This 207-nucleotide RNA was probed chemically with 2A3. Conditions: 150 mM KOAc, 10 mM MgCl2 and 150 mM bicine (pH 8.5), 24 C. Source: RMDB library RNAMAK, as collected in RNAgym.

RNA sequence: GGGAACGACUCGAGUAGAGUCGAAAAGCGUACUACGAAGCCCUGGUUCGCGACGAUCGUAUGCGGGCUACUCCCAAAUAGGAGUAGCUACAUACGGGAGCGAACCCUGGCUUCGUAUCGCAAAAGGUGAGUUUCGUGUUCGCACGAAACUCACCAAUCGUGUCCAUUAGUUCGCUAAUGGACACGAAAAAGAAACAACAACAACAAC
Reactivity to 2A3 in 0.01 (KOAc 150mM, MgCl2 10mM, bicine 150mM(pH8.5), 24C), signal-to-noise 2, nucleotides 027 to 156: g000c010g070u160a080c040u000a000c020g000a020a000g000c010c000c000u010g000g000u000u010c010g010c030g080a290c020g020a100u020c000g000u000a000u000g060c280g000g070g020c000u000a000c000u060c030c010c030a210a260a120u300a080g000g000a000g000u000a000g010c000u000a000c000a000u000a000c020g000g000g000a000g010c000g000a000a000c010c000c000u010g000g000c000u000u000c000g000u000a020u000c000g000c000a020a040a010a060g020g020u010g000a000g000u000u000u000c020g000u030g040u070u120c290g010c100a000c010g030a000a000a010c000u000c000a000c020c000a000a020